[RMDB]
RNA sequence: GGGAACGACUCGAGUAGAGUCGAAAAUCAUCGUUCUUCGGAACGAUGAAGUAUAACGCGGGCUCCGGACACAGGCGUACCUGGCCUGGGAUAGUCACAGUAUGGGGCAAACUUUCGAGUUUGCCAAUGCUAAAGACCAGUUCGCUGGUCUUUAGCAAAAAGAAACAACAACAACAAC
Reactivity to DMS in 0.01 (KOAc 150mM, MgCl2 10mM, bicine 150mM(pH8.5), 24C), signal-to-noise 2, nucleotides 027 to 126: u000c000a000u010c000g030u000u000c000u010u020c170g040g000a010a020c000g000a000u000g000a000a050g010u000a060u040a070a100c170g020c070g000g010g000c020u000c030c030g000g010a120c100a100c050a020g030g020c140g040u000a080c060c040u000g020g000c040c030u000g000g010g000a090u000a050g000u000c060a050c120a130g000u000a050u010g000g010g000g010c000a010a000a010c000u000u000u040c190g000a060g010u000u000u000g010c000c020a040a050

Conditions: 150 mM KOAc, 10 mM MgCl2 and 150 mM bicine (pH 8.5), 24 C. An RNA of 177 nucleotides, treated with DMS and read out base by base. High DMS reactivity at an A or C suggests that its Watson-Crick edge is free. For DMS the reverse transcriptase was MarathonRT. The DMS profile rests on 1,537 reads. Source: RMDB library M2PK50, as collected in RNAgym.